[RMDB]
RNA sequence: GGGAACGACUCGAGUAGAGUCGAAAAGUAUGAGGAGGUUGGACUAGUGUUGCAUCGUCCGUCUUGAAACACGGGCCAGGGAGUUCUUUGUUGUGGUGAGGCUAAAAGGUUUUUAUCCUUGUAGUCGCAGCCUGGAUAAAUUCGUUUAUCCAGGCUGAAAAGAAACAACAACAACAAC
Reactivity to 2A3 in 0.01 (KOAc 150mM, MgCl2 10mM, bicine 150mM(pH8.5), 24C), signal-to-noise 4, nucleotides 027 to 126: g080u060a070u220g040a010g040g020a020g000g040u070u100g010g030a040c010u060a090g020u030g050u140u090g030c020a040u040c050g050u040c000c000g010u030c030u030u090g060a070a030a000c030a000c000g000g000g000c020c000a050g060g020g000a060g020u050u030c050u040u070u060g010u000u000g000u010g040g050u060g040a050g000g000c010u020a050a040a000a020g060g050u000u070u080u110u140a100u170c000c000u010u010g080u020a000g000u000c010g000
Reactivity to DMS in 0.01 (KOAc 150mM, MgCl2 10mM, bicine 150mM(pH8.5), 24C), signal-to-noise 2, nucleotides 027 to 126: g030u020a050u030g020a040g000g010a070g030g020u000u000g020g020a020c100u010a080g000u030g000u010u000g020c050a100u010c110g040u020c020c030g030u000c030u020u000g000a170a060a110c190a040c080g030g040g020c020c060a040g030g000g020a110g020u020u000c060u000u000u020g030u000u030g000u010g010g000u000g000a070g020g000c000u000a010a080a020a030g000g010u020u010u100u090u010a090u040c000c000u000u000g020u000a030g060u020c050g000
Conditions: 150 mM KOAc, 10 mM MgCl2 and 150 mM bicine (pH 8.5), 24 C.
Structure probing data (2A3 and DMS) for a 177-nucleotide construct.
For 2A3 the reverse transcriptase was SuperScript II with manganese.
DMS (dimethyl sulfate) methylates the pairing face of unpaired adenines and cytosines.